[RMDB]
RNA sequence: GGGAACGACUCGAGUAGAGUCGAAAAGGGGUCACGAGACAUGGCACUGAAAUCGCGAGGAUCUAUACUGAAGCCUCCACGGUAUAGGGAGCGAUACGCAGUGCCAACAGCUCGUGACGGAGGCACCCAAAGAGUCAAAAGUUCGCUUUUGACUCAACAUCUCCCCCAAGUUCGCUUGGGGGAGAUGAAAAGAAACAACAACAACAAC
Reactivity to 2A3 in 0.01 (KOAc 150mM, MgCl2 10mM, bicine 150mM(pH8.5), 24C), signal-to-noise 2, nucleotides 027 to 156: g010g000g050g020u000c000a010c010g030a000g040a050c300a300u300g000g000c000a020c000u000g010a050a010a000u000c020g010c000g020a200g040g000a000u000c000u000a000u000a010c000u020g010a120a040g000c020c020u000c000c000a000c000g030g030u000a000u000a010g030g030g000a010g000c020g010a020u040a020c160g040c000a000g000u000g020c030c010a010a000c080a010g000c010u000c000g000u010g000a000c020g000g000a000g000g000c010a010c000c000c000a060a140a060g000a000g000u000c010a000a000a000a000g040u070u160c230g110c160u010u010u000u000g000a000c000u000c000a000a000